Source: RMDB library OK2TST, as collected in RNAgym. Structure probing data (DMS) for a 177-nucleotide construct. The reactions ran in a buffer of 150 mM KOAc, 10 mM MgCl2 and 150 mM bicine (pH 8.5), at 24 C. High DMS reactivity at an A or C suggests that its Watson-Crick edge is free.

RNA sequence: GGGAACGACUCGAGUAGAGUCGAAAAAUGGUCAAAUAAAUGCAAGAGGAAGCUUUGCUCCAAUAUGCGGUUCAGUACAAAAGGUUGGUUCAAAGACAUAUGGUGUGGGUACUGCUCAAGUUGAUUACAGCUAAUUUAGCUUCGGCUAAAUUAGCUGAAAAGAAACAACAACAACAAC
Reactivity to DMS in 0.01 (KOAc 150mM, MgCl2 10mM, bicine 150mM(pH8.5), 24C), signal-to-noise 1, nucleotides 027 to 126: a060u000g000g000u000c060a020a000a090u000a050a110a150u000g030c080a030a050g020a240g000g000a100a080g000c010u000u000u000g010c010u040c010c020a000a090u000a050u000g010c110g010g000u000u000c060a050g000u000a080c150a040a120a100a030g020g070u000u000g010g010u000u000c040a100a070a050g000a050c070a030u000a040u000g000g000u000g030u000g000g000g000u000a060c110u010g000c060u010c070a050a100g000u000u000g000a110u010u000a130